[RMDB]
About this RNA
Chemical mapping of a 177-nucleotide RNA with DMS and 2A3. 2A3 adducts were read by reverse transcription with SuperScript II with manganese. DMS adducts were read by reverse transcription with MarathonRT. Conditions: 150 mM KOAc, 10 mM MgCl2 and 150 mM bicine (pH 8.5), 24 C.

RNA sequence: GGGAACGACUCGAGUAGAGUCGAAAACAUGAACGCUUGAACUGCGGCGCUCGGCCAGAGUCGAGAGGCCUUGUGGUUCGUUGCUUGACCGAAGAGGUAGGGAUCGAGCUGCGGUGCCGCGGCACCGUCUUGGGUUCGUGUUCGCGCGGACUCAAGAAAAAGAAACAACAACAACAAC
Reactivity to DMS in 0.01 (KOAc 150mM, MgCl2 10mM, bicine 150mM(pH8.5), 24C), signal-to-noise 9, nucleotides 027 to 126: c090a080u030g010a070a090c120g010c050u010u020g000a050a060c010u010g010c040g000g010c010g010c010u000c020g010g000c010c190a130g000a140g010u000c030g000a040g010a110g010g010c000c000u010u020g040u000g000g010u000u000c020g000u010u010g010c050u000u020g000a090c020c020g010a100a100g000a150g000g010u010a050g000g000g000a060u010c040g000a050g010c050u000g010c010g000g010u000g000c020c040g010c220g020g010c040a030c050c030g000
Reactivity to 2A3 in 0.01 (KOAc 150mM, MgCl2 10mM, bicine 150mM(pH8.5), 24C), signal-to-noise 9, nucleotides 027 to 126: c040a060u140g060a080a010c040g030c080u090u090g020a040a010c010u020g010c010g030g000c020g010c020u040c020g020g000c010c060a150g040a080g180u080c040g040a030g010a040g120g020c000c000u030u120g010u010g000g000u010u000c010g020u010u080g020c010u030u030g060a020c000c000g030a120a020g030a030g080g010u030a030g010g000g010a040u030c010g000a010g000c000u010g000c010g000g000u010g000c000c010g020c000g020g000c000a010c000c020g030